[RMDB]
RNA sequence: GGGAACGACUCGAGUAGAGUCGAAAAAGAUCGAUUACGAUCGAUCAAUGAUGCGCCUCACCCACCUCUGAAGAUCCCAGGUGGGCGAGGGAACGGAGCACGGGAUCACGAGCAGUACGCUGCUCGAAAAAGAACUAGACCUUCGGGUCUAGUUCAAUCAUAAUCGUAUCUUCGGAUACGAUUAUGAAAAAGAAACAACAACAACAAC
Reactivity to DMS in 0.01 (KOAc 150mM, MgCl2 10mM, bicine 150mM(pH8.5), 24C), signal-to-noise 2, nucleotides 027 to 156: a170g010a000u000c010g020a040u000u030a160c220g020a140u000c000g010a030u000c010a060a110u000g010a120u010g010c100g000c000c000u000c000a020c010c010c000a010c010c000u000c030u020g020a160a180g000a150u000c000c000c020a120g040g040u000g030g000g030c010g010a020g010g000g030a050a100c090g000g020a180g060c060a080c130g010g010g030a080u000c010a260c000g010a060g000c000a030g030u000a070c300g040c020u060g000c000u000c030g030a010a100a040a050a050g020a030a000c000u000a000g000a050c000c010u010u000c300g080g050g060u000c000u000a000g000u000u000c000a070a180
Reactivity to 2A3 in 0.01 (KOAc 150mM, MgCl2 10mM, bicine 150mM(pH8.5), 24C), signal-to-noise 4, nucleotides 027 to 156: a010g000a000u000c010g010a010u050u090a080c210g020a020u010c000g000a000u000c010a010a090u170g110a070u120g060c060g040c030c000u000c010a020c000c010c000a000c000c000u040c050u110g130a130a030g000a030u000c020c000c000a000g000g000u000g010g010g000c000g000a000g000g000g030a060a070c160g100g080a110g080c120a090c120g000g000g000a000u010c020a020c030g000a000g000c000a000g000u060a030c260g040c120u020g010c000u000c000g000a000a000a010a000a000g010a000a000c000u000a000g000a000c020c000u050u140c300g090g010g000u000c000u000a000g000u000u000c000a000a000
Structure probing data (DMS and 2A3) for a 207-nucleotide construct. Conditions: 150 mM KOAc, 10 mM MgCl2 and 150 mM bicine (pH 8.5), 24 C. It was measured as part of the RMDB library M2RFPK. The DMS profile rests on 3,036 reads.